[RMDB]
RNA sequence: GGGAACGACUCGAGUAGAGUCGAAAAAUGAUGAUUGCUGCAGUUAAAGAGUUCGUAGUCGAAGUGGUUAUAACGGCGUAACAGGCCUUCUCUCAAGGAGGGUUAUGCGCCGUGAUUCCAUGGAAUACGAUAGGGGCAUCUUCGGAUGCCCCUAUCGAAAAGAAACAACAACAACAAC
Reactivity to DMS in 0.01 (KOAc 150mM, MgCl2 10mM, bicine 150mM(pH8.5), 24C), signal-to-noise 2, nucleotides 027 to 126: a120u020g010a020u100g050a110u040u040g000c000u000g090c010a030g010u030u000a100a090a100g000a040g000u040u010c010g010u000a060g020u000c090g000a180a170g000u000g000g000u020u000a000u030a200a000c040g000g000c000g060u000a030a070c260a060g050g010c000c020u000u000c000u000c100u150c210a090a300g000g000a030g000g020g010u000u000a050u030g040c000g010c030c000g030u000g000a120u000u000c000c000a030u000g030g010a190a050u080a020
Reactivity to 2A3 in 0.01 (KOAc 150mM, MgCl2 10mM, bicine 150mM(pH8.5), 24C), signal-to-noise 1, nucleotides 027 to 126: a000u220g060a050u120g000a010u150u140g000c000u060g100c060a140g010u130u190a010a030a000g090a010g000u030u110c020g000u000a000g080u020c040g030a080a000g000u000g080g000u120u000a010u060a110a030c000g000g000c000g020u050a150a030c010a020g060g000c000c000u000u000c040u010c030u060c030a050a000g010g010a000g000g000g000u040u070a010u100g000c000g000c000c000g030u000g000a000u000u000c000c000a000u000g000g050a000a030u050a120